[RMDB]
RNA sequence: GGGAACGACUCGAGUAGAGUCGAAAACAUUCUGAUAAAAGGAAAGAGAACUCUGCAGACGGGCAAUAGUAACGUCCUUUUUCAAUGCCGAGAGGUCGGCAUCUAGAGCCCUCUGCGAGUACACCUGCCAUUUAUACCAGUUCGCUGGUAUAAAUGGAAAAGAAACAACAACAACAAC
Reactivity to DMS in 0.01 (KOAc 150mM, MgCl2 10mM, bicine 150mM(pH8.5), 24C), signal-to-noise 5, nucleotides 027 to 126: c130a150u000u000c030u010g010a140u010a060a080a090a140g010g010a040a070a100g000a150g010a110a030c010u000c020u020g060c010a030g010a030c200g040g000g010c000a030a160u010a020g000u020a060a090c040g010u000c010c010u000u000u000u010u000c070a100a120u000g020c230c150g000a030g000a050g000g010u000c000g010g000c160a050u020c010u000a010g000a300g000c010c000c000u000c000u000g010c010g010a010g000u010a060c080a090c020c000u000g010
Reactivity to 2A3 in 0.01 (KOAc 150mM, MgCl2 10mM, bicine 150mM(pH8.5), 24C), signal-to-noise 5, nucleotides 027 to 126: c010a090u120u050c030u080g090a110u180a200a150a050a030g050g020a100a170a030g060a040g020a040a020c010u050c170u300g000c000a000g000a030c130g000g000g010c000a010a040u010a010g020u020a030a020c030g020u040c000c000u030u050u020u050u090c110a200a150u200g140c090c070g030a030g010a010g040g000u020c000g020g010c090a010u020c000u000a000g010a010g000c000c000c000u010c000u000g010c000g000a000g000u000a010c020a010c000c000u030g040